[RMDB]
RNA sequence: GGGAACGACUCGAGUAGAGUCGAAAACUUACACACGGCCCCAUUGCGCGCGGGUUGCCUACCAAUAAGAUUUGCUGCAAAAUUAAACAACGAUCGCGCAAUUAAUACAUUGAUAUCGCAUGAAAUAAACACCAAAGGUAGUGAAAUGCGCGAUAUAGAUAAUUGAAUCGUUCGCGAUUCAAUUAUCAAAAGAAACAACAACAACAAC
Reactivity to DMS in 0.01 (KOAc 150mM, MgCl2 10mM, bicine 150mM(pH8.5), 24C), signal-to-noise 1, nucleotides 027 to 156: c050u020u000a160c080a140c040a110c000g020g020c000c010c010c020a210u000u000g000c060g060c000g000c000g000g020g030u010u000g030c000c020u000a230c080c030a100a210u010a090a230g000a190u000u000u000g030c040u000g030c070a060a110a080a100u000u030a030a070a230c050a080a130c120g000a040u000c020g000c030g000c000a030a140u020u010a090a080u000a070c010a130u000u000g000a070u000a040u000c060g010c070a130u000g020a090a060a150u000a120a060a110c030a000c030c020a030a060a160g010g040u020a050g040u020g020a040a030a120u000g020c000g020c020g010a000u000a020u000a130
Reactivity to 2A3 in 0.01 (KOAc 150mM, MgCl2 10mM, bicine 150mM(pH8.5), 24C), signal-to-noise 3, nucleotides 027 to 156: c020u140u210a050c060a000c010a020c050g080g010c000c020c010c010a030u010u120g000c010g000c000g000c020g010g020g000u020u080g000c000c000u040a050c010c030a080a140u150a170a040g070a130u060u110u150g040c040u050g010c040a030a030a080a150u080u080a190a080a090c050a070a050c060g030a040u010c050g000c000g000c110a000a000u050u100a030a020u080a020c050a060u010u150g040a020u040a020u080c030g000c100a020u070g050a080a020a160u130a080a130a010c050a020c080c020a120a090a040g060g000u050a020g040u020g040a050a140a060u070g030c000g000c000g000a000u000a000u010a080
The record gives the reactivity of an RNA of 207 nucleotides to DMS and 2A3.
Reactivities are given for positions 27 through 156.
The DMS profile rests on 1,692 reads.
The reactions ran in a buffer of 150 mM KOAc, 10 mM MgCl2 and 150 mM bicine (pH 8.5), at 24 C.
For 2A3, 1,398 sequencing reads were counted.
Source: RMDB library OK3TST, as collected in RNAgym.
DMS adducts were read by reverse transcription with MarathonRT.